Description
The data come from the RNA Mapping Database (RMDB), library OK3TST. Chemical mapping of a 207-nucleotide RNA with 2A3. The reactions ran in a buffer of 150 mM KOAc, 10 mM MgCl2 and 150 mM bicine (pH 8.5), at 24 C.
RNA sequence: GGGAACGACUCGAGUAGAGUCGAAAACUCUCGAGGAGACUCGAGAGAGCAUGCUUCGGCAUGCAACGCUGCGCAUGACAAGAACGGCUAAUCGCGCCCGCAGCGCAGCAUAUGUAGGAUGACGCACGUCAACACAUAUGGUGCUAGUUCUGUCACACGGUACGACCAUAUUCGUAUGGUCGUACCGAAAAGAAACAACAACAACAAC
Reactivity to 2A3 in 0.01 (KOAc 150mM, MgCl2 10mM, bicine 150mM(pH8.5), 24C), signal-to-noise 1, nucleotides 027 to 156: c000u000c000u000c000g000a000g050g000a020g050a030c000u000c000g010a000g000a000g000a000g030c000a000u010g000c000u050u020c180g160g000c010a010u010g020c010a000a110c040g010c030u040g000c030g020c050a050u140g020a030c050a180a020g040a050a000c020g000g000c050u070a100a080u160c130g000c030g010c050c010c000g000c000a010g000c000g000c000a000g050c000a000u010a000u010g010u010a140g040g110a250u060g000a000c050g100c160a090c220g010u010c000a060a050c000a030c010a000u000a010u020g160g000u000g080c020u080a040g010u000u000c000u000g030u050c000a080c010a000